[RMDB]
RNA sequence: GGGAACGACUCGAGUAGAGUCGAAAAGGGGUCAGCUCUAUCUCCAUGUAGCUCAACAGCUCACUGAAGCCUCCACGGUGAGACAUGAGCUCAUGGAGCCGAGGAGCUGACGGAGGCACCCAAAACGCAAACAUAGCCUUCGGGCUAUGUUUGCGAAUCUGUACAGGAAGUUCGCUUCCUGUACAGAAAAAGAAACAACAACAACAAC
Reactivity to 2A3 in 0.01 (KOAc 150mM, MgCl2 10mM, bicine 150mM(pH8.5), 24C), signal-to-noise 2, nucleotides 027 to 156: g060g010g050g030u020c000a020g000c000u020c010u040a190u200c000u030c000c000a010u040g210u300a040g000c010u020c020a100a160c090a130g010c000u000c000a040c000u030g020a180a020g050c010c000u020c000c000a000c020g020g000u000g010a010g020a000c010a190u190g000a000g010c000u010c000a010u010g000g000a000g020c000c030g170a210g000g000a000g000c000u000g000a000c000g000g000a000g030g010c000a020c000c010c000a000a080a000a030c000g010c030a000a000a000c020a000u020a000g000c000c050u090u090c250g000g000g010c010u010a000u000g000u000u000u010g000c000g000a000a000